Chemical mapping of a 207-nucleotide RNA with 2A3 and DMS. DMS adducts were read by reverse transcription with MarathonRT. For DMS, 6,745 sequencing reads were counted. The reactions ran in a buffer of 150 mM KOAc, 10 mM MgCl2 and 150 mM bicine (pH 8.5), at 24 C. It was measured as part of the RMDB library RNAMAK.

[RMDB]
RNA sequence: GGGAACGACUCGAGUAGAGUCGAAAAGGAGAUUCGUCUCCGUUAUGACCUUUGUGCGAGGGAGGAGAAGGGAGAACGGUAAUUCCCCAUUGGGGUGCCAGUUCGAAGAACUUCUCCGAAGAACUCGCACUCUGGUGGCCAGCGACUUCGGUCGCAAUUCAAAUCGUGUAUUCGUACACGAUUUGAAAAAAGAAACAACAACAACAAC
Reactivity to 2A3 in 0.01 (KOAc 150mM, MgCl2 10mM, bicine 150mM(pH8.5), 24C), signal-to-noise 4, nucleotides 027 to 156: g000g010a000g000a020u040u130c180g070u010c090u000c000c010g010u090u130a220u290g090a020c000c000u000u010u030g010u000g000c000g000a010g000g030g010a010g000g000a000g000a000a000g010g000g010a040g000a010a000c010g010g000u070a170a220u210u190c040c000c010c050a300u180u300g010g000g010g000u020g000c030c040a080g000u010u000c070g020a260a020g000a020a020c000u000u000c000u000c000c010g000a000a000g000a000a000c000u000c000g000c000a000c000u010c000u000g000g000u030g010g110c060c040a040g020c000g010a010c000u030u100c270g070g000u000c000g000c010a000a030
Reactivity to DMS in 0.01 (KOAc 150mM, MgCl2 10mM, bicine 150mM(pH8.5), 24C), signal-to-noise 3, nucleotides 027 to 156: g020g010a020g000a070u000u000c220g030u000c000u000c000c000g000u000u010a100u010g020a110c020c000u000u000u000g020u000g020c010g000a040g020g000g010a240g020g010a030g010a020a040g020g010g020a270g010a020a010c030g010g000u000a040a280u010u000c000c000c030c040a300u000u020g010g020g080g080u010g010c000c010a110g030u000u000c000g000a130a150g020a130a170c050u020u000c000u000c000c000g000a030a110g000a120a200c010u000c020g020c010a000c000u000c030u000g010g030u010g030g000c030c030a140g000c030g010a040c000u000u010c300g060g020u000c010g000c010a050a050